[RMDB]
RNA sequence: GGGAACGACUCGAGUAGAGUCGAAAAGUACCAGUGGGCCGUGAAGUCCAUAGCCCCCUUAAUGUCCUGUGGGUGAAAGUGCUCGGACGGCUGAACUUUCAUAAUCCGGCGCGUCUGCGUCUUGCGAGUAGUCUUGUGUGUUCGCACACAAGACUACAAAAGAAACAACAACAACAAC
Reactivity to 2A3 in 0.01 (KOAc 150mM, MgCl2 10mM, bicine 150mM(pH8.5), 24C), signal-to-noise 1, nucleotides 027 to 126: g030u060a030c000c040a080g010u080g020g090g000c010c000g090u060g030a160a050g110u000c010c010a000u040a020g010c000c000c030c020c000u070u170a130a030u130g030u170c000c010u080g000u100g040g010g010u090g070a050a050a000g040u060g040c030u030c080g080g030a040c050g010g000c010u000g050a040a020c050u070u120u050c080a040u080a150a010u030c060c010g000g000c030g000c020g060u110c080u090g000c020g010u000c010u080u070g030c010g010a060
Reactivity to DMS in 0.01 (KOAc 150mM, MgCl2 10mM, bicine 150mM(pH8.5), 24C), signal-to-noise 2, nucleotides 027 to 126: g020u010a080c050c010a150g030u010g000g010g010c010c020g000u010g000a090a150g000u000c040c020a030u000a080g030c000c010c010c040c070u000u000a070a060u010g000u000c120c040u000g050u000g020g000g020u000g000a030a060a060g020u010g020c120u010c070g000g000a070c060g010g020c000u000g020a100a060c010u000u000u000c070a070u010a120a120u000c040c050g000g000c020g010c020g010u000c040u000g000c110g020u010c020u010u030g010c150g010a070

The data come from the RNA Mapping Database (RMDB), library OK2TST.
An RNA of 177 nucleotides, treated with 2A3 and DMS and read out base by base.
For DMS, 1,491 sequencing reads were counted.
2A3 is a SHAPE reagent: it acylates the 2'-hydroxyl of flexible nucleotides of all four kinds.
2A3 adducts were read by reverse transcription with SuperScript II with manganese.